[RMDB]
RNA sequence: GGGAACGACUCGAGUAGAGUCGAAAACCGAGAGGCCUCCCAAUCUCUUUCCGUAUAUUUAGUUCUAGAAAGAGAUUAAUACCACGAUUUAAUUAUUCGAAUAAAUAGUAGAAUAUUUUUACCUUGACGCAUGAAGCAGAUUCGUCUGCUUCAUGCGAAAAGAAACAACAACAACAAC
Reactivity to 2A3 in 0.01 (KOAc 150mM, MgCl2 10mM, bicine 150mM(pH8.5), 24C), signal-to-noise 2, nucleotides 027 to 126: c000c060g010a040g000a010g000g000c060c000u000c000c000c000a000a050u020c000u000c000u010u010u010c020c060g020u110a130u000a100u300u280u110a110g190u150u000c020u020a020g000a000a000a000g040a000g000a000u000u040a020a000u090a030c030c050a060c090g050a030u030u060u160a100a120u060u150a000u020u000c000g020a020a020u120a300a170a090u150a200g000u030a020g000a000a000u010a130u050u090u000u000u070a070c010c000u010u000g010a000